Chemical mapping of a 177-nucleotide RNA with 2A3 and DMS.
For 2A3, 6,128 sequencing reads were counted.
For DMS, 3,846 sequencing reads were counted.
Reactivities are given for positions 27 through 126.
[RMDB]
RNA sequence: GGGAACGACUCGAGUAGAGUCGAAAAUCUUGCACCUUCGGGUGCAAGAAAAUCUAAGCGCAUGCGAGCGCACAGCGCACGCUGAAAAACUGCGCAAAAGAAAAACUCAGCACUUCGGUGCUGAGAACAGAAGUAAUACGUUCGCGUAUUACUUCUGAAAAGAAACAACAACAACAAC
Reactivity to 2A3 in 0.01 (KOAc 150mM, MgCl2 10mM, bicine 150mM(pH8.5), 24C), signal-to-noise 3, nucleotides 027 to 126: u010c000u000u000g000c000a010c010c000u010u040c220g150g000g010u010g000c000a000a000g000a000a000a000a000u010c010u030a130a030g010c020g000c010a010u070g000c000g020a020g020c010g000c030a070c070a300g010c000g000c000a020c020g000c000u050g050a030a030a030a030a060c110u030g010c000g000c000a060a070a020a070g040a010a080a010a010a010c000u000c000a000g000c010a000c000u040u090c230g090g010u000g000c000u000g000a000g000a010a000
Reactivity to DMS in 0.01 (KOAc 150mM, MgCl2 10mM, bicine 150mM(pH8.5), 24C), signal-to-noise 4, nucleotides 027 to 126: u000c000u010u000g000c000a000c000c000u010u010c190g050g000g020u000g010c000a000a000g000a030a030a080a100u000c040u000a110a240g020c010g020c000a030u000g020c010g000a040g020c010g020c010a110c180a100g020c000g040c010a050c000g010c000u000g010a060a090a050a120a120c260u000g000c010g020c000a050a040a070a050g000a030a070a090a180a120c000u000c000a000g000c000a000c000u000u010c160g010g010u000g010c000u010g000a000g000a070a110
It was measured as part of the RMDB library M2PK50.